[RMDB]
Description: Chemical mapping of a 177-nucleotide RNA with DMS and 2A3. 2A3 adducts were read by reverse transcription with SuperScript II with manganese. For DMS, 964 sequencing reads were counted. The data come from the RNA Mapping Database (RMDB), library OK2TST. The RNA was probed in 150 mM KOAc, 10 mM MgCl2 and 150 mM bicine (pH 8.5) at 24 C. For DMS the reverse transcriptase was MarathonRT.
RNA sequence: GGGAACGACUCGAGUAGAGUCGAAAACAGCUGUAGAAGGAUUGAGGAUAACCUAUCAAGGGUUUAUCUUCAGUCAACAAUUUACUGUUCCAUGCGAGAUGUGGAAAAAAAUGUACCAGCAUGGAAGCAUUGCGGUACACUUCGGUGUACCGCAAUGAAAAGAAACAACAACAACAAC
Reactivity to DMS in 0.01 (KOAc 150mM, MgCl2 10mM, bicine 150mM(pH8.5), 24C), signal-to-noise 2, nucleotides 027 to 126: c050a200g000c120u010g030u010a010g000a160a120g010g000a020u000u010g000a000g000g000a040u000a040a020c000c000u010a180u020c300a160a200g020g010g020u010u000u010a010u000c000u000u000c000a010g000u010c000a100a110c110a030a060u010u000u010a040c080u010g000u000u010c000c000a000u000g000c050g000a120g020a120u020g010u010g010g020a010a000a000a040a080a070a080u030g040u010a110c050c010a230g000c020a010u000g040g000a020a090g010
Reactivity to 2A3 in 0.01 (KOAc 150mM, MgCl2 10mM, bicine 150mM(pH8.5), 24C), signal-to-noise 1, nucleotides 027 to 126: c010a020g110c050u100g040u150a020g040a150a070g170g010a000u010u010g010a000g010g000a000u000a000a000c000c000u070a090u210c130a090a260g030g040g000u100u190u040a020u000c020u000u000c000a000g000u000c000a000a000c020a030a060u110u110u120a070c030u070g070u070u040c010c020a010u000g000c000g050a190g060a210u090g000u200g100g000a130a030a010a010a000a010a040u090g000u020a090c030c020a050g000c000a030u020g000g020a030a000g000